[RMDB]
RNA sequence: GGGAACGACUCGAGUAGAGUCGAAAAGGAAGAAGUGCAGUAAGAGUGCUGCCACCAUUGAAAACCACGCUGGAAGGUCCUGCAGAGAUUGGCUAAUAGAUGUCGGGCUAAUAUUCAUGAAGAGUCAACCUUCGAAUGUAUUCGUACAUUCGAAGGUAAAAGAAACAACAACAACAAC
Reactivity to DMS in 0.01 (KOAc 150mM, MgCl2 10mM, bicine 150mM(pH8.5), 24C), signal-to-noise 4, nucleotides 027 to 126: g000g020a110a070g000a110a080g010u010g020c030a030g020u000a090a120g020a150g010u010g020c030u010g010c020c020a070c050c060a080u000u000g000a080a040a110a120c050c010a070c110g000c050u000g000g020a110a040g010g010u000c030c040u010g010c070a050g010a050g010a060u000u000g010g010c070u000a060a100u020a090g010a060u000g010u000c100g010g000g000c030u010a050a050u000a070u000u000c030a070u010g010a080a060g010a070g000u000c100a110
Reactivity to 2A3 in 0.01 (KOAc 150mM, MgCl2 10mM, bicine 150mM(pH8.5), 24C), signal-to-noise 4, nucleotides 027 to 126: g080g020a080a070g090a110a020g030u110g050c030a000g010u120a130a030g120a060g290u110g010c010u000g000c010c000a020c010c030a060u080u150g040a070a040a030a030c020c020a040c030g000c040u050g010g030a070a020g070g000u030c020c020u010g000c030a010g020a020g020a140u060u080g070g010c040u060a020a040u060a150g070a050u060g030u050c020g000g000g020c010u030a080a030u090a100u140u090c090a070u170g080a100a050g030a010g090u010c040a040
Annotation: An RNA of 177 nucleotides, treated with DMS and 2A3 and read out base by base. Reactivities are rounded to 0.1 and cut off at 0 and 3. For 2A3, 3,553 sequencing reads were counted.